[RMDB]
RNA sequence: GGGAACGACUCGAGUAGAGUCGAAAAGCAUGUGCUGAGGCCAGCACUGAGAUGAGCAGGCAUGCGUGUGUGGCCACCCCUAUUUCUGUGCUAUAGUGGGAGGAGCACAUUAGGUACUUUGAGGCCAAAGACCCUGUUGUUUCGACAACAGGGUCUUAAAAGAAACAACAACAACAAC
Reactivity to DMS in 0.01 (KOAc 150mM, MgCl2 10mM, bicine 150mM(pH8.5), 24C), signal-to-noise 2, nucleotides 027 to 126: g020c040a010u020g010u020g000c010u030g000a180g020g020c080c040a160g020c040a030c010u000g020a130g020a110u000g010a090g000c060a060g020g040c090a020u010g000c080g020u010g050u000g020u000g000g000c000c010a220c040c000c000c040u000a040u000u000u000c170u000g010u000g000c150u010a080u000a060g010u010g000g030g000a080g000g020a300g000c020a010c030a050u010u010a050g000g000u000a090c060u000u000u000g000a110g010g000c000c020a020
Reactivity to 2A3 in 0.01 (KOAc 150mM, MgCl2 10mM, bicine 150mM(pH8.5), 24C), signal-to-noise 1, nucleotides 027 to 126: g040c030a010u110g000u040g100c000u020g020a030g140g000c070c010a000g070c020a040c110u140g070a050g010a230u100g030a060g130c010a020g020g080c070a060u090g040c050g000u060g040u000g000u050g060g130c000c000a050c000c000c000c000u020a050u000u160u020c100u140g080u090g000c060u000a000u000a070g070u280g060g000g000a020g000g020a000g070c010a020c010a010u070u110a060g050g000u050a020c010u060u080u140g100a050g040g000c000c010a000

Annotation
The record gives the reactivity of an RNA of 177 nucleotides to DMS and 2A3. The RNA was probed in 150 mM KOAc, 10 mM MgCl2 and 150 mM bicine (pH 8.5) at 24 C. For DMS, 1,360 sequencing reads were counted. Reactivities are given for positions 27 through 126. It was measured as part of the RMDB library OK2TRN.